[RMDB]
Chemical mapping of a 177-nucleotide RNA with 2A3 and DMS.

RNA sequence: GGGAACGACUCGAGUAGAGUCGAAAAGAUAUGGACGAUAGGUGGAGAGCGAAGAACUCGGAAACGAGGGAGCUCCCACUAUCGUCCUAAGUCAAAACCUCUAAGGCCGUUCGCGGCCUUAGAGGAAUCCAUAUAAGAGCUUCGGCUCUUAUAUGGAAAAAGAAACAACAACAACAAC
Reactivity to 2A3 in 0.01 (KOAc 150mM, MgCl2 10mM, bicine 150mM(pH8.5), 24C), signal-to-noise 2, nucleotides 027 to 126: g020a010u030a020u140g000g000a000c030g000a000u000a070g230g080u090g030g250a300g010a010g290c050g110a300a080g030a130a050c000u000c020g030g000a050a060a030c000g010a010g000g000g000a030g000c020u010c000c010c000a000c000u010a000u010c000g000u000c000c010u000a000a000g000u000c010a010a060a070a180c040c000u000c000u000a000a000g030g000c000c000g020u070u150c300g030c050g230g000c000c000u000u000a010g000a000g000g000a000a010
Reactivity to DMS in 0.01 (KOAc 150mM, MgCl2 10mM, bicine 150mM(pH8.5), 24C), signal-to-noise 2, nucleotides 027 to 126: g000a020u030a300u000g010g000a020c000g010a000u000a000g030g000u010g010g000a150g030a010g050c010g000a080a120g000a090a210c010u000c000g000g020a130a120a210c000g010a010g000g000g000a080g000c000u000c000c000c000a010c000u000a010u000c000g010u000c000c000u000a000a020g000u000c040a130a080a140a110c000c000u000c010u010a010a000g000g000c020c000g020u000u010c190g000c000g010g000c000c000u000u020a000g000a010g000g000a020a020